[RMDB]
RNA sequence: GGGAACGACUCGAGUAGAGUCGAAAAAAGGUGCCAUCAUAUCGGUUAUGAACUCUUAACUCUGAUGGCUUUCGAGUUAUGUGGUGCAUUGAAGCUCUCCCUUCAAAUGGUCGUACAGUUCCGUGAAAACACUAUGCGUAUUCGUACGCAUAGUGUUAAAAGAAACAACAACAACAAC
Reactivity to 2A3 in 0.01 (KOAc 150mM, MgCl2 10mM, bicine 150mM(pH8.5), 24C), signal-to-noise 4, nucleotides 027 to 126: a000a000g080g000u040g000c020c000a030u020c000a010u050a050u220c070g030g030u050u060a030u100g150a220a150c040u060c020u150u020a010a000c000u000c050u100g020a030u020g010g000c000u010u030u040c010g010a020g010u040u040a080u130g060u090g020g030u030g060c030a050u030u090g040a030a010g000c010u000c000u020c030c000c000u010u020c000a050a070a100u070g020g030u030c020g030u060a060c020a060g020u050u010c010c000g070u110g020a140a170
Reactivity to DMS in 0.01 (KOAc 150mM, MgCl2 10mM, bicine 150mM(pH8.5), 24C), signal-to-noise 7, nucleotides 027 to 126: a060a060g010g010u010g020c030c020a030u000c020a060u010a110u010c200g010g000u000u010a030u000g000a110a100c150u010c060u000u000a020a020c020u000c070u010g020a030u000g010g000c070u000u000u000c030g000a060g000u000u000a040u000g010u010g020g000u000g010c060a080u000u010g000a080a060g000c060u000c080u000c050c050c000u000u010c060a030a070a070u000g000g010u000c060g010u000a050c100a090g010u000u000c010c020g020u000g000a070a070

Conditions: 150 mM KOAc, 10 mM MgCl2 and 150 mM bicine (pH 8.5), 24 C.
This 177-nucleotide RNA was probed chemically with 2A3 and DMS.
For 2A3 the reverse transcriptase was SuperScript II with manganese.
Reactivities are given for positions 27 through 126.
DMS adducts were read by reverse transcription with MarathonRT.